[RMDB]
RNA sequence: GGGAACGACUCGAGUAGAGUCGAAAAAAGGCGGGAAGCCAUGUCUGUUUUGGAACGAGACUUUCCAGCAUCCAUACAACACUCUGAAAUACCCCAACGGGGAGGGGGGCCUGGGUGAGCACAACUACUAAAGGAUGAUCUUCGGAUCAUCCUUUAGAAAAGAAACAACAACAACAAC
Reactivity to DMS in 0.01 (KOAc 150mM, MgCl2 10mM, bicine 150mM(pH8.5), 24C), signal-to-noise 2, nucleotides 027 to 126: a060a050g010g000c060g000g020g000a040a080g020c030c030a080u020g020u000c020u000g010u010u000u010u000g000g010a080a100c090g000a110g010a040c050u020u010u000c030c030a090g030c080a080u010c040c020a110u020a090c110a040a140c060a030c050u020c020u000g000a120a040a080u000a130c040c000c010c040a030a170c130g020g010g000g020a070g000g030g010g000g000g010c060c040u010g010g000g010u000g000a050g020c040a010c100a000a080c080u020a150